[RMDB]
RNA sequence: GGGAACGACUCGAGUAGAGUCGAAAAAUGCGCGAGGUGGAGAACAACAUGCUGUUCGGCAUGACCACCGACGAGAUGCUCAUGCGCGGCCUCGACCGUGACUCCCACUGCCUCCCGCACUUUGCUGGGUGUGAACACACUUCGGUGUGUUCACACCAAAAGAAACAACAACAACAAC
Reactivity to 2A3 in 0.01 (KOAc 150mM, MgCl2 10mM, bicine 150mM(pH8.5), 24C), signal-to-noise 1, nucleotides 027 to 126: a040u060g000c000g000c020g000a060g000g000u050g000g050a040g090a100a050c080a000a030c000a030u090g000c040u080g180u300u300c110g000g010c000a000u010g020a020c010c010a010c020c000g010a040c060g030a040g010a000u140g010c020u020c010a010u130g030c040g010c000g020g000c060c090u130c070g090a130c000c030g030u010g070a080c040u000c040c000c000a050c030u060g010c020c000u000c000c020c000g020c010a000c050u080u140u150g030c040u120g080
Reactivity to DMS in 0.01 (KOAc 150mM, MgCl2 10mM, bicine 150mM(pH8.5), 24C), signal-to-noise 2, nucleotides 027 to 126: a090u000g030c000g010c170g000a150g000g020u000g000g040a280g020a040a180c220a100a190c120a010u000g020c060u000g000u010u020c180g010g020c000a000u010g000a090c070c010a020c000c010g020a100c160g000a070g010a020u010g010c150u000c070a030u000g000c060g000c040g000g000c040c030u000c110g010a060c060c040g010u000g020a180c050u000c010c010c050a080c090u010g000c070c010u000c000c000c010g020c100a110c090u000u000u000g020c150u010g000
Overview: Conditions: 150 mM KOAc, 10 mM MgCl2 and 150 mM bicine (pH 8.5), 24 C. An RNA of 177 nucleotides, treated with 2A3 and DMS and read out base by base. It was measured as part of the RMDB library OK2TRN. For DMS the reverse transcriptase was MarathonRT.